This 177-nucleotide RNA was probed chemically with 2A3.
Values cover nucleotides 27 to 126.
As a SHAPE reagent, 2A3 marks flexible, mostly unpaired nucleotides at the ribose 2'-OH.

RNA sequence: GGGAACGACUCGAGUAGAGUCGAAAAUCUCCUAGCUUGAUCUUUUGAUCUCUCAAAUCGAUCUUAAGAAAAAGAUCAGUCAAAGAGAUGAGAGUAGAUGUCUGUAGAUCUCGGACCAGGCUUCAUUGCACCUUUAGCGGUUCGCCGCUAAAGGUGCAAAAGAAACAACAACAACAAC
Reactivity to 2A3 in 0.01 (KOAc 150mM, MgCl2 10mM, bicine 150mM(pH8.5), 24C), signal-to-noise 1, nucleotides 027 to 126: u090c000u060c020c010u000a020g010c010u010u010g030a000u050c000u000u020u020u220g060a050u000c010u000c000u000c020a000a000a160u120c010g090a000u030c000u060u070a040a040g090a110a300a120a030a000g000a000u000c000a000g110u140c150a030a030a140g060a040g000a000u020g000a010g000a000g020u090a020g000a010u100g070u000c010u000g140u070a180g000a100u000c070u010c090g000g000a000c000c000a000g000g030c000u030u030c030a010u000u000